[RMDB]
RNA sequence: GGGAACGACUCGAGUAGAGUCGAAAAGGCGGAUGACGUUCCCGUCCGGGCACGCAUAGCGCGCUGUAGCCGGCGCCGUCGACACUGAUAUCCGCUCUGUAGGGUCGCAGCAGGCCGCUGGCGACGACCUAAUGACCCGAUUCGUCGGGUCAUUAGGAAAAGAAACAACAACAACAAC
Reactivity to 2A3 in 0.01 (KOAc 150mM, MgCl2 10mM, bicine 150mM(pH8.5), 24C), signal-to-noise 5, nucleotides 027 to 126: g030g010c010g020g020a020u040g030a060c040g030u050u020c020c010c000g020u050c020c020g000g000g010c010a000c020g020c030a080u190a250g100c050g000c010g050c170u040g050u100a080g140c010c000g000g010c010g010c020c020g060u080c040g020a020c030a020c140u030g020a030u020a020u190c020c010g020c030u030c030u130g130u110a070g050g080g030u010c010g020c030a040g000c000a030g040g170c070c050g000c040u030g060g040c010g010a020c020g030a030
Reactivity to DMS in 0.01 (KOAc 150mM, MgCl2 10mM, bicine 150mM(pH8.5), 24C), signal-to-noise 6, nucleotides 027 to 126: g000g010c000g010g000a010u000g010a260c180g010u000u000c020c030c010g010u000c040c030g000g010g010c050a030c020g010c030a180u000a130g000c190g010c020g010c140u000g010u010a110g020c030c010g010g000c060g010c100c040g000u010c050g010a060c140a060c040u000g000a160u010a040u000c000c010g000c020u000c050u000g010u000a070g010g000g010u010c010g010c080a070g010c030a100g010g010c170c110g020c060u000g010g000c010g000a030c050g010a190